[RMDB]
RNA sequence: GGGAACGACUCGAGUAGAGUCGAAAACGUGAGUGCAUGCGAAAGGAUGGGCCAUCCGAAACGUACGCCUUCAAGGAUGGGAAAGCAUGCUAAGGAUGGGAAAGCAUGCUCCAUCCGAAACGUACGGAGAUCUCUCUCCGUACGGAAACCAUCCGUCGAGCGGCGGUAAAUUCGUUUACCGCCGCUCAAAAGAAACAACAACAACAAC
Reactivity to 2A3 in 0.01 (KOAc 150mM, MgCl2 10mM, bicine 150mM(pH8.5), 24C), signal-to-noise 1, nucleotides 027 to 156: c030g020u040g100a100g090u250g000c040a080u150g030c040g090a120a010a020g010g000a000u000g000g010g010c000c040a000u010c010c050g040a050a060a000c030g000u130a080c080g160c010c030u150u060c060a040a140g000g000a000u010g010g010g000a010a010a010g020c000a000u000g020c010u030a150a030g040g050a070u110g020g000g010a130a210a000g000c010a000u080g000c000u000c000c000a000u020c010c000g000a010a010a000c000g000u000a000c000g060g000a010g000a030u060c110u010c000u000c020u000c240c030g000u000a000c010g000g000a050a020a000c020c000a000u020c000c010g070u000c010
Chemical mapping of a 207-nucleotide RNA with 2A3.
2A3 adducts were read by reverse transcription with SuperScript II with manganese.
High 2A3 reactivity points to a flexible backbone, as in loops and unpaired stretches.
It was measured as part of the RMDB library OK3TST.
The reactions ran in a buffer of 150 mM KOAc, 10 mM MgCl2 and 150 mM bicine (pH 8.5), at 24 C.
Values are in units of 0.01, from 0 to 300, in steps of 10.